[RMDB]
RNA sequence: GGGAACGACUCGAGUAGAGUCGAAAAGUUUAUGACGACUGCUGACUCCGUUAAUCGCCCCUUCCGGGUAGAGGUCAGUUUCAGCUGCCAUGCUGCGAAUAUUAUUAGGGUAGUGAGGCGGAGACUAAAUACCUGAGUAUUUCGAUACUCAGGUAUUAAAAGAAACAACAACAACAAC
Reactivity to DMS in 0.01 (KOAc 150mM, MgCl2 10mM, bicine 150mM(pH8.5), 24C), signal-to-noise 9, nucleotides 027 to 126: g010u000u000u010a080u020g010a110c110g010a080c060u010g010c110u010g000a120c010u000c020c030g010u000u000a070a170u000c040g010c030c000c000c110u000u000c150c070g010g000g010u000a020g010a120g010g010u010c020a020g010u000u010u010c220a130g000c020u000g010c010c020a060u000g000c010u000g010c050g010a060a080u010a080u010u000a150u000u000a080g010g000g010u000a050g020u000g000a150g000g000c010g010g000a050g010a100c080u000a060
Reactivity to 2A3 in 0.01 (KOAc 150mM, MgCl2 10mM, bicine 150mM(pH8.5), 24C), signal-to-noise 6, nucleotides 027 to 126: g020u040u110u090a210u230g100a030c050g020a030c030u070g020c030u050g060a070c010u010c010c010g000u010u050a110a070u050c010g010c010c000c000c000u070u030c040c040g030g010g000u030a030g040a110g020g020u180c040a000g000u000u160u120c030a030g000c000u010g000c020c000a020u040g000c020u110g110c030g060a090a020u130a060u300u140a090u080u140a070g030g020g010u040a060g020u060g020a010g020g000c010g010g010a010g000a010c010u050a100
The record gives the reactivity of an RNA of 177 nucleotides to DMS and 2A3.
The RNA was probed in 150 mM KOAc, 10 mM MgCl2 and 150 mM bicine (pH 8.5) at 24 C.
It was measured as part of the RMDB library OK2TST.